[RMDB]
RNA sequence: GGGAACGACUCGAGUAGAGUCGAAAAGUGGCGGACGUCCGUACCCACGGCCCUACCGGCUGGUGCGUCCAACUAUGCCGACAGCGGUGCUCGCAGAGCACGGUCGCGAGCUGGUGUCGCAUUGGCGGCUAAGUGUUACAUUCGUGUAACACUUAGCAAAAGAAACAACAACAACAAC
Reactivity to 2A3 in 0.01 (KOAc 150mM, MgCl2 10mM, bicine 150mM(pH8.5), 24C), signal-to-noise 9, nucleotides 027 to 126: g020u030g020g050c080g010g040a150c100g170u120c050c040g030u120a140c000c010c010a010c000g050g000c000c000c010u050a120c040c050g140g000c000u020g020g010u010g000c000g000u010c000c010a010a010c030u110a060u210g090c140c010g050a040c030a090g300c130g270g010u030g010c010u010c050g300c180a090g000a010g030c010a010c030g030g020u040c020g000c010g010a010g000c000u010g010g020u050g090u170c000g000c010a010u010u020g050g000c040g010
Reactivity to DMS in 0.01 (KOAc 150mM, MgCl2 10mM, bicine 150mM(pH8.5), 24C), signal-to-noise 9, nucleotides 027 to 126: g020u000g010g010c130g010g010a110c130g010u010c070c060g020u000a130c110c020c030a170c040g000g010c030c010c030u010a090c110c090g000g020c010u000g000g010u000g000c010g010u010c010c010a030a040c030u000a060u010g020c120c020g000a010c020a060g010c090g020g010u000g010c010u000c010g020c190a150g000a030g010c010a020c020g010g010u000c020g010c010g000a020g010c010u000g010g000u000g010u000c010g000c010a030u000u000g000g010c020g010